[RMDB]
RNA sequence: GGGAACGACUCGAGUAGAGUCGAAAAGGUGACCUACCCGGCAGGGGUGGGCCAAGUCAGCUCUUACAGCCUGGUUGACAGCAAGAUCGGGAGCGUCCUAGGCCUGGACACCAACACCGCGCCUGCGCAGGCUAGGAACAUUCGUGUUCCUAGCCUGAAAAGAAACAACAACAACAAC
Reactivity to 2A3 in 0.01 (KOAc 150mM, MgCl2 10mM, bicine 150mM(pH8.5), 24C), signal-to-noise 2, nucleotides 027 to 126: g020g030u060g040a050c010c010u020a040c010c030c000g090g100c110a070g040g030g050g000u020g020g010g000c000c000a040a000g030u030c030a020g000c020u030c010u060u110a060c060a020g030c020c010u050g040g080u130u190g100a030c010a020g050c030a070a070g020a200u170c070g060g000g000a010g020c020g010u050c000c040u090a040g000g000c000c000u010g000g050a020c030a030c040c010a050a000c030a010c050c000g000c020g010c050c000u050g040c050g010
Reactivity to DMS in 0.01 (KOAc 150mM, MgCl2 10mM, bicine 150mM(pH8.5), 24C), signal-to-noise 4, nucleotides 027 to 126: g010g010u010g010a090c040c030u010a050c010c000c010g000g030c190a110g020g010g010g020u000g000g010g020c020c020a050a090g000u000c070a110g000c030u010c050u000u000a110c130a090g000c090c000u010g020g000u010u020g010a100c060a080g010c110a070a090g010a100u000c080g010g000g010a060g010c050g010u000c030c030u020a070g010g020c020c040u000g000g010a060c050a090c020c050a050a090c120a090c040c020g010c100g010c030c000u000g010c120g010

An RNA of 177 nucleotides, treated with 2A3 and DMS and read out base by base. For DMS, 3,771 sequencing reads were counted. For 2A3, 2,738 sequencing reads were counted. For DMS the reverse transcriptase was MarathonRT.